[RMDB]
RNA sequence: GGGAACGACUCGAGUAGAGUCGAAAAAAAGAUAUGGACGACCGAACUACUCCCUGGGACAUCUGAUGACCGCUGCUCGGAAACGAGCAGCGCAAGGAUGUUAAGGGAGCGGUCGUCCUAAGUCAAACAUAGAUUCUGUCUUCGGACAGAAUCUAUGAAAAGAAACAACAACAACAAC
Reactivity to 2A3 in 0.01 (KOAc 150mM, MgCl2 10mM, bicine 150mM(pH8.5), 24C), signal-to-noise 2, nucleotides 027 to 126: a030a000a000g080a060u110a070u140g020g000a010c000g010a000c010c000g040a070a020c060u230a100c010u300c000c040c040u130g300g300g150a030c010a000u010c010u190g130a300u140g010a180c040c100g020c000u000g000c020u000c000g030g030a040a000a100c010g000a000g050c000a000g010c030g080c010a000a090g000g000a000u000g000u000u020a020a010g000g000g000a000g000c000g000g000u000c000g000u000c000c000u000a000a010g000u000c000a040a000a030
Reactivity to DMS in 0.01 (KOAc 150mM, MgCl2 10mM, bicine 150mM(pH8.5), 24C), signal-to-noise 2, nucleotides 027 to 126: a020a140a070g000a010u000a300u000g010g010a030c000g000a030c000c000g000a040a030c060u010a300c000u000c020c000c020u000g040g030g010a010c000a000u000c000u000g020a180u030g010a150c300c020g020c010u000g020c000u000c020g010g000a070a030a110c000g010a020g020c000a000g000c020g040c030a010a090g000g020a000u000g030u000u010a300a020g000g000g090a010g000c020g000g000u000c010g000u000c000c000u000a000a030g010u000c050a160a080a290